[RMDB]
Chemical mapping of a 207-nucleotide RNA with 2A3 and DMS.
RNA sequence: GGGAACGACUCGAGUAGAGUCGAAAAACCUUUGUGUACUUUUGACGCUCCGAAAGGGAGAGGGUCUCCCAUUGGGAGACCUCCCCACCUCCCUAAGGAGCGAUAAGUACACUCUGGUAAAGAAGAUGAUAUCGAGUUCGCUCGAUAUCAUCUUCAAGUUGUAUACGAAGUUCGCUUCGUAUACAACAAAAGAAACAACAACAACAAC
Reactivity to 2A3 in 0.01 (KOAc 150mM, MgCl2 10mM, bicine 150mM(pH8.5), 24C), signal-to-noise 7, nucleotides 027 to 156: a000c010c000u010u010u010g000u000g000u000a000c000u020u080u050u160g300a120c030g000c000u010c000c010g070a300a100a030g010g000g000a010g000a010g000g000g000u000c010u010c040c050c140a300u190u270g010g000g000a000g000a000c000c000u030c010c000c000c000a030c000c000u000c000c000c000u010a020a040g000g000a000g000c000g000a000u000a000a000g000u000a000c000a000c000u000c000u010g010g010u070a120a090a040g000a000a000g000a000u000g000a000u000a000u000c000g000a000g010u070u100c210g060c110u000c000g000a000u000a000u000c000a000u000c000u000u000c000a000a000
Reactivity to DMS in 0.01 (KOAc 150mM, MgCl2 10mM, bicine 150mM(pH8.5), 24C), signal-to-noise 2, nucleotides 027 to 156: a070c010c000u000u010u000g000u000g000u010a010c000u010u000u000u000g000a230c060g020c000u010c000c000g000a100a210a110g010g010g030a040g000a300g020g010g030u000c000u000c000c010c000a300u020u010g070g010g000a030g000a020c000c010u010c060c020c020c080a270c160c010u000c000c000c020u050a070a300g000g010a030g040c000g000a000u010a000a020g030u000a020c010a010c000u000c000u000g010g030u010a040a120a140g010a010a020g000a010u000g010a060u000a010u000c000g010a050g020u000u000c300g000c000u000c000g000a000u000a000u000c000a010u000c000u000u000c000a020a050
The data come from the RNA Mapping Database (RMDB), library RNAMAK. The RNA was probed in 150 mM KOAc, 10 mM MgCl2 and 150 mM bicine (pH 8.5) at 24 C. For 2A3, 13,939 sequencing reads were counted.